[RMDB]
RNA sequence: GGGAACGACUCGAGUAGAGUCGAAAAUGUCUAUAAUCCGUGGUAUAUUUCAUUGGCGAGUGUGUGCGUGCGUGUGCUGUGGCAGCGGCUUUUUUGGCUGCGCUCGGCGUGUGUGCUGUGUGUGCUUAAGAAAGGAACUAUUCGUAGUUCCUUUCUUAAAAGAAACAACAACAACAAC
Reactivity to 2A3 in 0.01 (KOAc 150mM, MgCl2 10mM, bicine 150mM(pH8.5), 24C), signal-to-noise 4, nucleotides 027 to 126: u060g020u040c040u040a130u080a120a150u010c010c030g050u060g030g060u100a150u000a030u150u140u150c100a090u040u070g030g000c030g010a060g030u060g010u020g000u050g030c030g000u030g020c030g020u110g040u030g000c020u040g010u080g080g010c030a060g010c040g040g030c000u060u040u040u010u130u290g050g020c030u050g040c010g020c020u010c000g040g000c030g010u020g010u000g010u020g000c040u020g010u000g010u000g010u030g040c000u020u000
Reactivity to DMS in 0.01 (KOAc 150mM, MgCl2 10mM, bicine 150mM(pH8.5), 24C), signal-to-noise 4, nucleotides 027 to 126: u020g010u010c050u010a090u020a080a080u010c030c040g010u010g010g010u010a060u020a070u010u010u010c070a070u010u010g010g010c060g000a080g020u000g010u000g010u000g010c050g010u000g000c030g030u010g020u000g010c000u000g010u020g000g020c050a070g050c040g000g000c020u010u010u010u020u020u030g010g000c010u010g000c030g020c040u000c030g000g000c040g020u010g000u000g020u000g010c030u000g000u000g010u010g000u000g000c050u000u000